This 207-nucleotide RNA was probed chemically with 2A3 and DMS.
[RMDB]
RNA sequence: GGGAACGACUCGAGUAGAGUCGAAAAGUGGGACCUGUUCUGUUUAGUAUGUAUGCGGCGGUAUUAAUGAGCUCUGCCCAUAGCACUUGCGGUAAUGGCUCAUGAGCGUACAUCAUUGAUCUUGCUGUCUCAAAAAAGUAUGACCUUCGGGUCAUACGAGCCUAUUAGGGUUCGCCCUAAUAGGCUCAAAAGAAACAACAACAACAAC
Reactivity to 2A3 in 0.01 (KOAc 150mM, MgCl2 10mM, bicine 150mM(pH8.5), 24C), signal-to-noise 4, nucleotides 027 to 156: g060u040g000g010g030a020c020c050u070g040u100u050c010u020g070u040u060u020a070g040u050a010u030g010u010a030u020g010c030g070g000c070g070g010u140a170u180u150a130a040u040g010a000g000c000u010c020u100g010c010c000c000a010u040a050g090c070a060c200u040u080g010c070g010g020u040a170a100u120g030g000c000u000c020a020u020g030a000g000c010g000u010a010c010a010u020c010a020u010u110g050a030u040c040u040u090g000c060u030g020u010c000u030c060a050a080a090a050a000a050g040u070a000u070g000a000c000c010u010u030c240g040g000g000u000c000a000u000a000c000
Reactivity to DMS in 0.01 (KOAc 150mM, MgCl2 10mM, bicine 150mM(pH8.5), 24C), signal-to-noise 3, nucleotides 027 to 156: g040u000g020g020g010a070c020c050u010g000u000u000c080u010g000u000u010u010a100g020u000a020u010g010u000a040u000g040c040g030g020c080g030g040u000a110u010u000a090a060u010g000a070g030c060u000c300u010g010c000c000c020a130u010a110g020c080a090c160u000u000g020c110g040g020u000a050a080u000g020g010c030u000c010a030u000g010a070g120c040g020u000a020c050a050u010c050a160u020u000g020a110u000c040u000u000g030c020u000g030u010c020u020c000a000a100a120a160a110a200g010u000a000u000g000a030c000c000u010u000c300g040g020g020u000c010a000u000a000c000